[RMDB]
An RNA of 177 nucleotides, treated with DMS and 2A3 and read out base by base. The 2A3 profile rests on 5,860 reads.
RNA sequence: GGGAACGACUCGAGUAGAGUCGAAAAGGUGGGGCCUGUAGCUCAGAGGAUUAGAGCACGUGGCUACGAACCACGGUGUCGGGGGUUCGAAUCCCUCCUCGCCCACAACCGGCCCAAAAGGGAAGUACCUAUGCUCACAUUUCGAUGUGAGCAUAGGAAAAGAAACAACAACAACAAC
Reactivity to DMS in 0.01 (KOAc 150mM, MgCl2 10mM, bicine 150mM(pH8.5), 24C), signal-to-noise 5, nucleotides 027 to 126: g010g010u000g030g000g000g000c010c060u000g010u000a120g020c000u020c000a070g010a130g000g020a250u020u020a020g000a020g040c010a300c010g010u000g010g020c030u060a070c300g010a230a260c000c010a000c000g020g010u010g000u020c000g010g000g010g010g010u000u000c060g010a300a040u010c000c000c000u000c010c010u020c300g010c000c000c000a080c240a190a000c000c000g020g000c010c000c010a020a030a070a090g020g010g000a050a090g000u000a150
Reactivity to 2A3 in 0.01 (KOAc 150mM, MgCl2 10mM, bicine 150mM(pH8.5), 24C), signal-to-noise 5, nucleotides 027 to 126: g020g000u030g010g010g020g020c000c000u000g000u020a010g000c020u000c020a010g070a090g160g060a220u150u250a070g010a000g010c000a000c010g020u010g020g000c050u100a070c150g030a040a030c000c010a000c000g020g020u140g050u120c010g000g000g000g000g010u010u000c010g000a000a010u010c000c000c000u000c000c000u000c000g000c000c020c010a100c010a040a060c000c010g050g000c000c000c000a050a130a020a030g150g060g030a110a060g070u060a050
Background:
The data come from the RNA Mapping Database (RMDB), library OK1LIB. For DMS the reverse transcriptase was MarathonRT.